[RMDB]
An RNA of 177 nucleotides, treated with 2A3 and DMS and read out base by base. The reactions ran in a buffer of 150 mM KOAc, 10 mM MgCl2 and 150 mM bicine (pH 8.5), at 24 C. Reactivities are given for positions 27 through 126.
RNA sequence: GGGAACGACUCGAGUAGAGUCGAAAAUGACGCUAGCUACACUACCGACAUUCCUCAAUCAGCUGUGGCGUUAUUGAAUGGAUUGAUAGACAUACUUAGAAAAGCAGGAUAUGACGUGAAGCUGUAAGGGUAGUGCAGUAUUCGUACUGCACUACCCAAAAGAAACAACAACAACAAC
Reactivity to 2A3 in 0.01 (KOAc 150mM, MgCl2 10mM, bicine 150mM(pH8.5), 24C), signal-to-noise 2, nucleotides 027 to 126: u070g020a000c040g080c100u010a010g050c000u080a020c030a020c020u040a000c010c000g030a040c010a100u000u060c010c020u080c040a070a250u060c000a020g000c000u030g140u170g230g000c010g000u040u010a020u040u050g060a010a020u000g020g200a040u080u080g040a060u060a040g050a010c070a210u220a080c050u120u070a050g110a060a030a010a010g040c010a000g010g020a010u020a010u060g010a030c020g030u060g030a030a000g000c000u010g010u060a040a130
Reactivity to DMS in 0.01 (KOAc 150mM, MgCl2 10mM, bicine 150mM(pH8.5), 24C), signal-to-noise 2, nucleotides 027 to 126: u000g030a170c060g010c060u000a060g040c060u010a060c120a170c070u000a060c020c010g010a130c060a120u000u010c020c020u000c110a120a070u040c010a050g040c000u000g010u000g000g000c000g010u030u000a000u010u010g010a300a100u000g010g010a200u010u000g000a160u010a100g000a080c100a250u000a070c150u000u000a110g010a090a010a070a060g010c010a030g010g010a170u010a010u000g010a120c030g000u000g000a270a050g010c030u000g020u000a130a090